[RMDB]
Structure probing data (DMS) for a 177-nucleotide construct. The reactions ran in a buffer of 150 mM KOAc, 10 mM MgCl2 and 150 mM bicine (pH 8.5), at 24 C. Values cover nucleotides 27 to 126. It was measured as part of the RMDB library TTRDEL. For DMS, 4,444 sequencing reads were counted.
RNA sequence: GGGAACGACUCGAGUAGAGUCGAAAAGAUAUGGACGUGGACAUGCUCCGGUAUCGGAAACGAUACCGGAGCAACAGCCACAGUCCUAAGUCAAAGGCGUAUCAACCCUUCGGGGUUGAUACGCCAACCAAACUAAUACGUUCGCGUAUUAGUUUGGAAAAGAAACAACAACAACAAC
Reactivity to DMS in 0.01 (KOAc 150mM, MgCl2 10mM, bicine 150mM(pH8.5), 24C), signal-to-noise 3, nucleotides 027 to 126: g010a050u000a300u010g000g010a000c000g020u000g000g010a030c070a090u000g010c010u010c010c000g000g010u010a000u000c010g000g000a110a050a170c010g010a020u000a000c000c000g020g000a000g020c010a000a020c190a120g000c000c000a000c000a080g020u000c000c010u000a020a090g000u010c050a070a120a100g000g010c000g000u000a000u000c000a010a000c000c000c010u000u010c180g010g020g010g010u000u000g000a000u000a010c000g010c000c010a000a030